[RMDB]
RNA sequence: GGGAACGACUCGAGUAGAGUCGAAAACGAAGCGCCUACGCGAGGAAAUCAGUCCACUGGACUGAUUUCUGAUCCCGCUUCGAUCCGUUGGAUAAUACGAUAAGACAAAUAAUUAGAGCGGUUCCAGAUGGUGGUUAUACUUCGGUAUAACCACCAUAAAAGAAACAACAACAACAAC
Reactivity to DMS in 0.01 (KOAc 150mM, MgCl2 10mM, bicine 150mM(pH8.5), 24C), signal-to-noise 4, nucleotides 027 to 126: c040g000a010a030g030c000g010c280c120u030a100c170g010c100g010a210g010g000a000a010a000u000c020a000g000u000c000c000a110c300u080g020g020a000c000u010g010a000u000u000u000c000u000g000a180u030c030c140c000g000c000u000u000c000g000a120u010c060c040g010u000u000g010g010a120u000a130a040u030a070c130g020a090u030a040a110g010a080c130a040a110a060u040a070a070u010u010a070g000a050g000c040g000g000u000u000c000c010a120g000
Reactivity to 2A3 in 0.01 (KOAc 150mM, MgCl2 10mM, bicine 150mM(pH8.5), 24C), signal-to-noise 6, nucleotides 027 to 126: c010g000a010a010g000c000g040c060c170u210a040c060g040c060g060a030g000g020a000a000a000u010c000a000g000u010c010c030a300c300u300g000g000a000c000u000g000a000u000u000u000c000u000g000a000u030c000c000c000g000c000u030u010c000g040a060u030c040c010g010u050u090g080g060a120u070a130a050u090a140c060g050a060u060a190a050g100a030c070a050a200a020u150a080a030u190u120a030g010a010g040c000g010g010u010u000c010c000a030g020